Source: RMDB library OK2TST, as collected in RNAgym. The record gives the reactivity of an RNA of 177 nucleotides to DMS and 2A3. The RNA was probed in 150 mM KOAc, 10 mM MgCl2 and 150 mM bicine (pH 8.5) at 24 C. The DMS profile rests on 10,334 reads. Reactivities are given for positions 27 through 126.

RNA sequence: GGGAACGACUCGAGUAGAGUCGAAAACGGACCGAGCAUGCGCACCGGUUACGGAGGCACUACAUUCUGUUGGUAUUAAAUAUCGGCUCAGGGGACUGACCCGCUGACGAACACCUCAGAGAAAUUCCUAGAACUAGUAAUUCGUUACUAGUUCUAGAAAAGAAACAACAACAACAAC
Reactivity to DMS in 0.01 (KOAc 150mM, MgCl2 10mM, bicine 150mM(pH8.5), 24C), signal-to-noise 8, nucleotides 027 to 126: c060g000g000a070c020c020g010a110g020c070a120u000g020c130g000c050a110c070c040g010g010u000u010a060c070g010g010a130g010g010c070a070c070u000a070c120a090u010u000c040u000g010u010u000g010g010u000a060u000u000a060a090a120u010a080u000c010g000g010c160u000c030a060g010g000g020g010a170c080u000g000a110c100c010c020g000c070u000g000a100c150g000a070a060c140a030c030c020u000c020a040g000a070g000a080a070a150u010u000c050
Reactivity to 2A3 in 0.01 (KOAc 150mM, MgCl2 10mM, bicine 150mM(pH8.5), 24C), signal-to-noise 7, nucleotides 027 to 126: c010g020g000a000c020c020g000a030g040c050a080u230g060c070g000c110a060c070c010g010g030u050u070a090c010g020g020a050g060g020c030a020c060u100a030c030a140u080u050c020u050g120u150u070g040g010u050a050u080u200a220a130a070u190a050u070c010g030g000c040u020c060a030g000g000g010g050a090c070u090g060a100c020c010c020g000c040u020g020a020c010g010a040a010c020a020c040c000u010c020a010g010a010g030a070a100a070u120u050c010